Chemical mapping of a 177-nucleotide RNA with 2A3 and DMS. For DMS, 2,879 sequencing reads were counted. The 2A3 profile rests on 2,398 reads. Reactivities are given for positions 27 through 126. 2A3 adducts were read by reverse transcription with SuperScript II with manganese. Reactivities are rounded to 0.1 and cut off at 0 and 3.
RNA sequence: GGGAACGACUCGAGUAGAGUCGAAAAAUCAUUUAUAAUUGGACGACGCCAAUUAACAAAAGGCAUUGAUUUAGAAGGGCGGACAUUUUUACACAAUUAUGAUUGGCGUAAAGAUAAAGAUGGCAAAGCUCUCUAGCUAAUUCGUUAGCUAGAGAGCAAAAGAAACAACAACAACAAC
Reactivity to 2A3 in 0.01 (KOAc 150mM, MgCl2 10mM, bicine 150mM(pH8.5), 24C), signal-to-noise 3, nucleotides 027 to 126: a010u020c040a030u040u070u070a100u040a030a060u060u030g050g000a050c050g000a000c010g070c000c000a000a000u100u010a050a070c040a040a020a030a010g080g000c010a020u000u080g090a100u090u130u090a080g030a120a060g090g000g020c020g040g020a010c000a020u050u070u020u040u090a040c080a000c010a030a090u090u060a050u220g220a080u000u000g000g000c040g000u000a010a060a090g030a010u140a040a080a020g030a000u000g000g050c060a020a010a070
Reactivity to DMS in 0.01 (KOAc 150mM, MgCl2 10mM, bicine 150mM(pH8.5), 24C), signal-to-noise 3, nucleotides 027 to 126: a060u020c060a020u080u020u000a090u000a060a130u010u000g020g020a160c190g010a070c100g010c000c000a000a010u030u070a120a080c250a130a070a090a130g010g000c180a030u020u010g000a120u000u000u020a080g020a060a090g000g000g020c020g000g000a060c070a020u000u000u000u000u010a100c080a040c070a030a020u040u000a100u040g010a070u000u020g000g000c070g030u020a030a070a020g000a040u010a050a100a070g000a070u000g000g010c090a060a040a070